This 177-nucleotide RNA was probed chemically with DMS and 2A3. The 2A3 profile rests on 663 reads. The RNA was probed in 150 mM KOAc, 10 mM MgCl2 and 150 mM bicine (pH 8.5) at 24 C.
[RMDB]
RNA sequence: GGGAACGACUCGAGUAGAGUCGAAAAGAGGGAUGGAAGGGCUGAGACAAAAAGGAUGGACUAUAUAUACAGUUUGUUGCUUAGAGGUCAUUUUGUCUAAGUAUGACUGCACUUAUAAGAUCAUGGGCGCACUCCCAAUUUUCGAAUUGGGAGUGCGAAAAGAAACAACAACAACAAC
Reactivity to DMS in 0.01 (KOAc 150mM, MgCl2 10mM, bicine 150mM(pH8.5), 24C), signal-to-noise 1, nucleotides 027 to 126: g000a050g060g010g030a010u000g000g020a100a010g000g000g100c010u060g010a070g120a060c100a020a020a250a050a120g030g020a000u000g000g000a060c080u010a050u010a030u020a050u050a080c060a040g000u040u000u060g010u030u000g060c000u010u000a060g000a040g000g050u010c130a130u000u000u050u060g000u000c000u000a000a060g000u000a010u080g000a080c000u010g030c100a000c150u000u000a020u050a000a030g000a060u060c130a100u060g050g000g010
Reactivity to 2A3 in 0.01 (KOAc 150mM, MgCl2 10mM, bicine 150mM(pH8.5), 24C), signal-to-noise 2, nucleotides 027 to 126: g050a010g040g040g000a010u090g000g090a050a100g000g090g000c090u070g010a000g010a060c060a000a170a000a000a000g040g010a080u120g040g000a010c020u000a000u000a000u010a000u000a290c010a030g010u080u120u190g090u000u110g060c020u010u090a010g000a020g030g160u300c030a250u130u150u090u180g060u000c000u000a010a010g000u000a000u080g000a030c000u010g030c020a020c120u120u070a020u050a110a000g020a180u090c040a020u000g000g000g000